Chemical mapping of a 207-nucleotide RNA with 2A3. Reactivities are given for positions 27 through 156. The data come from the RNA Mapping Database (RMDB), library RNAMAK. Conditions: 150 mM KOAc, 10 mM MgCl2 and 150 mM bicine (pH 8.5), 24 C.

[RMDB]
RNA sequence: GGGAACGACUCGAGUAGAGUCGAAAAGAUUGCGAUUCGUCGCAAUCACUAUAGAUAUGGAAAGUUGUAGAGAGGGGGAACACAUCGGAAACGAUGUGGGAACCUACCCACCUCUACACCUUUCCUAAGUCGCACCUAUAUCGCUUCGGCGAUAUAAGUUGGCUUACUUGUUCGCAAGUAAGCCAACAAAAGAAACAACAACAACAAC
Reactivity to 2A3 in 0.01 (KOAc 150mM, MgCl2 10mM, bicine 150mM(pH8.5), 24C), signal-to-noise 2, nucleotides 027 to 156: g000a000u000u010g000c010g020a010u030u140c220g030u010c000g130c000a000a000u020c000a000c000u130a110u150a060g020a030u060a030u110g020g000a010a000a000g000u030u000g020u000a010g000a000g000a020g000g030g000g000g000a000a010c010a000c010a000u000c010g040g030a050a080a010c000g000a000u000g000u000g000g000g010a010a010c000c010u120a180c020c010c000a100c020c000u030c010u000a000c000a000c020c000u000u010u010c000c000u000a020a000g000u000c010g020c040a050c000c000u000a000u000a000u030c000g010c000u040u040c250g130g000c020g000a000u000a000u010a000a000